[RMDB]
This 177-nucleotide RNA was probed chemically with DMS and 2A3.
The RNA was probed in 150 mM KOAc, 10 mM MgCl2 and 150 mM bicine (pH 8.5) at 24 C.
RNA sequence: GGGAACGACUCGAGUAGAGUCGAAAAUCAAACCUGAAUCUUCACAGAGUUGUAAAAGUUCGUUUUUGAGAUCGUUCUGAAUGAACACAUUUAUAGCUUUAUGUGUCUCUUUUUUCCGGGAAACAGACGUAGCCAAUUAAUUCGUUAAUUGGCUACGAAAAGAAACAACAACAACAAC
Reactivity to DMS in 0.01 (KOAc 150mM, MgCl2 10mM, bicine 150mM(pH8.5), 24C), signal-to-noise 4, nucleotides 027 to 126: u010c120a080a100a140c060c040u000g000a080a080u000c070u000u010c030a030c040a060g000a040g030u000u000g010u000a010a010a040a080g010u000u000c000g030u000u000u000u010u000g010a030g020a110u010c260g020u010u010c010u000g020a010a010u000g000a010a010c000a060c150a140u000u000u000a010u000a050g000c040u000u000u000a050u010g010u000g020u010c110u010c010u000u000u000u020u000u000c030c040g010g000g010a090a060a090c140a060g010a180
Reactivity to 2A3 in 0.01 (KOAc 150mM, MgCl2 10mM, bicine 150mM(pH8.5), 24C), signal-to-noise 2, nucleotides 027 to 126: u090c010a040a000a060c010c000u010g010a050a060u030c050u150u090c060a010c010a020g030a020g030u010u020g010u030a010a030a020a040g000u010u030c010g020u010u000u040u160u140g060a070g000a190u160c130g130u110u020c050u010g030a010a020u040g020a040a000c020a000c040a090u010u050u020a040u020a030g000c020u010u090u120a140u140g030u010g040u020c010u020c050u080u180u070u000u030u020c040c020g010g020g070a060a070a030c030a040g110a010

Overview: Reactivities are given for positions 27 through 126. For 2A3, 2,069 sequencing reads were counted. It was measured as part of the RMDB library OK2TRN.